[RMDB]
RNA sequence: GGGAACGACUCGAGUAGAGUCGAAAAGGAGGAUUGAGUUUGAGACAGAGCUCUUCAAGGGCUGUGCGGUCGUGUGGGCUCGCGGGCUCAGCUCAGCCCCAGAGGGGCUGUUUGCUGGGGAGAGGCGAUCAACAUCUAUGUUCGCAUAGAUGUUGAUAAAAGAAACAACAACAACAAC
Reactivity to 2A3 in 0.01 (KOAc 150mM, MgCl2 10mM, bicine 150mM(pH8.5), 24C), signal-to-noise 5, nucleotides 027 to 126: g040g020a040g020g020a070u030u100g030a060g090u060u110u130g040a030g000a020c030a040g150a020g050c010u020c000u110u090c080a070a090g050g010g000c030u030g040u100g080c060g030g040u100c060g010u080g010u090g080g030g020c050u040c050g020c040g030g030g010c020u010c040a000g000c000u010c000a000g010c000c020c010c040a070g170a150g130g000g000g000c010u020g020u060u080u070g010c010u030g000g020g010g020a080g000a010g020g020c030g020
Reactivity to DMS in 0.01 (KOAc 150mM, MgCl2 10mM, bicine 150mM(pH8.5), 24C), signal-to-noise 9, nucleotides 027 to 126: g010g000a080g010g010a090u000u010g010a070g010u000u010u000g000a150g010a110c090a130g010a050g010c020u000c020u000u010c140a130a120g000g000g010c020u000g010u000g020c070g010g020u000c070g020u000g020u000g010g010g010c040u000c050g020c110g010g010g010c020u000c010a030g010c010u000c010a020g010c000c000c010c040a190g010a120g030g020g010g020c010u000g000u000u000u010g010c020u000g000g000g010g000a090g000a100g010g010c090g000
This 177-nucleotide RNA was probed chemically with 2A3 and DMS.
For 2A3, 10,717 sequencing reads were counted.
For DMS the reverse transcriptase was MarathonRT.
The DMS profile rests on 25,272 reads.
The reactions ran in a buffer of 150 mM KOAc, 10 mM MgCl2 and 150 mM bicine (pH 8.5), at 24 C.